[RMDB]
RNA sequence: GGGAACGACUCGAGUAGAGUCGAAAAAUUUUACAGUCAAAACCCAGAUGCAGAAGGAAGAUACAACAUGGCUUUUGAUUCAUACAGUUGCUAGUAUAAUUGAUCCUUUAACCCACACUGAAGUUGAGUAUCGAUGUUUUUUCGAAAACAUCGAUACAAAAGAAACAACAACAACAAC
Reactivity to DMS in 0.01 (KOAc 150mM, MgCl2 10mM, bicine 150mM(pH8.5), 24C), signal-to-noise 2, nucleotides 027 to 126: a060u020u030u000u010a100c090a130g000u010c070a050a050a090a090c090c010c010a070g000a110u010g030c080a060g040a070a070g000g030a060a100g030a120u010a010c070a050a070c120a040u000g000g010c110u000u010u010u000g020a130u000u000c080a050u000a090c080a020g000u000u000g010c040u010a020g010u000a030u030a020a050u000u010g000a100u020c000c030u010u000u000a060a110c020c000c020a070c150a080c120u000g020a020a110g010u010u010g010a230
Reactivity to 2A3 in 0.01 (KOAc 150mM, MgCl2 10mM, bicine 150mM(pH8.5), 24C), signal-to-noise 2, nucleotides 027 to 126: a000u130u150u110u140a100c100a030g020u010c010a000a000a010a160c000c020c020a000g030a070u090g000c040a020g020a120a000g000g020a040a020g010a040u080a080c020a110a000c020a060u050g060g050c020u150u060u020u100g100a070u160u100c020a020u080a130c020a050g030u050u030g040c010u040a020g060u100a060u090a180a110u090u050g020a060u070c030c010u010u080u000a150a140c020c000c010a100c000a010c040u070g080a220a050g120u070u060g020a040